The record gives the reactivity of an RNA of 177 nucleotides to 2A3 and DMS.
[RMDB]
RNA sequence: GGGAACGACUCGAGUAGAGUCGAAAAGAAAGAGCAGCUGUGAUGAGACGUAACACAUAAGAAGGCCAAACCGAUCAAUUGGUUCUUCGAUGAAAUAUAUUUGUUACGCUUGGCUUCUGAGCUGAAAUUAGUCUACAAUGUUCGCAUUGUAGACUAAAAAAGAAACAACAACAACAAC
Reactivity to 2A3 in 0.01 (KOAc 150mM, MgCl2 10mM, bicine 150mM(pH8.5), 24C), signal-to-noise 9, nucleotides 027 to 126: g060a030a070a010g090a010g020c020a000g000c010u040g030u080g130a070u080g020a020g020a030c000g000u000a010a000c000a000c000a020u030a110a090g000a000a000g010g000c010c010a040a040a080c100c070g110a110u190c060a110a150u030u010g020g010u240u290c000u010u000c010g030a040u100g050a000a120a000u220a010u040a060u040u060u040g000u000u000a000c010g000c040u020u040g060g010c010u060u000c020u090g080a010g000c000u010g000a030a050a030
Reactivity to DMS in 0.01 (KOAc 150mM, MgCl2 10mM, bicine 150mM(pH8.5), 24C), signal-to-noise 9, nucleotides 027 to 126: g000a080a100a080g010a120g020c020a030g000c020u000g020u020g010a050u010g010a300g000a110c010g010u010a010a010c000a030c080a020u000a070a100g010a010a000g000g000c000c010a000a010a080c130c130g010a100u050c240a120a100u000u000g000g010u000u030c000u000u000c010g000a070u020g010a080a090a100u030a110u020a040u010u010u000g010u000u000a000c000g010c120u010u010g000g010c050u000u000c030u010g000a040g010c010u000g010a050a080a120
It was measured as part of the RMDB libraries RFM100 and RFMREP.
The reactions ran in a buffer of 150 mM KOAc, 10 mM MgCl2 and 150 mM bicine (pH 8.5), at 24 C.